[RMDB]
RNA sequence: GGGAACGACUCGAGUAGAGUCGAAAAACUGAUACCUUACGAGGUAUCAGAAUGACUUCGUGGUAGAGCGCCACGAACGGAAAAUAAAGAAACCUCGAUUGAAACGCACCGUGUACGCACGGUGCGAAAAAGUCGAUCCAGUUCGCUGGAUCGACAACUAGUUCGAAAGGUUCGCCUUUCGAACUAGAAAAGAAACAACAACAACAAC
Reactivity to 2A3 in 0.01 (KOAc 150mM, MgCl2 10mM, bicine 150mM(pH8.5), 24C), signal-to-noise 2, nucleotides 027 to 156: a000c000u010g000a000u010a010c000c000u050u040a070c290g070a020g000g000u000a000u000c010a010g000a000a060u100g010a060c020u010u000c000g000u000g000g020u060a090g020a070g130c080g020c010c000a000c000g000a000a010c010g040g030a070a020a100a040u120a000a150a040g090a060a050a020c050c070u140c090g220a260u020u210g040a170a060a000c010g000c000a020c000c040g020u010g000u060a010c180g000c120a010c010g000g000u010g010c000g000a000a000a000a000a000g000u000c010g000a000u000c000c000a010g060u100u060c120g020c150u000g000g000a000u000c010g000a000c000a000a000